The record gives the reactivity of an RNA of 177 nucleotides to 2A3.

[RMDB]
RNA sequence: GGGAACGACUCGAGUAGAGUCGAAAAGUUAAGCUGUUCGCAGCUUAACAAAUAAGGCGCGGCACCGUCCGCCGAACAAACGGAAAAUAAAAAUAAAAUAAAAAACACUUGAGUUCGCUCAAGUGAAGUGCUAUUAUAAGUUCGCUUAUAAUAGCACAAAAGAAACAACAACAACAAC
Reactivity to 2A3 in 0.01 (KOAc 150mM, MgCl2 10mM, bicine 150mM(pH8.5), 24C), signal-to-noise 1, nucleotides 027 to 126: g000u000u000a020a000g010c000u000g050u060u130c270g000c120a000g000c000u000u000a000a000c000a030a090a000u150a020a020g190g070c060g000c040g010g000c030a020c110c000g050u050c000c000g010c010c020g040a030a020c000a020a010a000c010g030g140a100a040a180a000u150a200a040a020a050a000u300a100a130a090a000u300a090a150a090a050a030a040c000a000c010u000u010g000a000g020u070u120c160g030c120u010c020a000a000g000u010g000a060a010
For 2A3 the reverse transcriptase was SuperScript II with manganese. The 2A3 profile rests on 896 reads.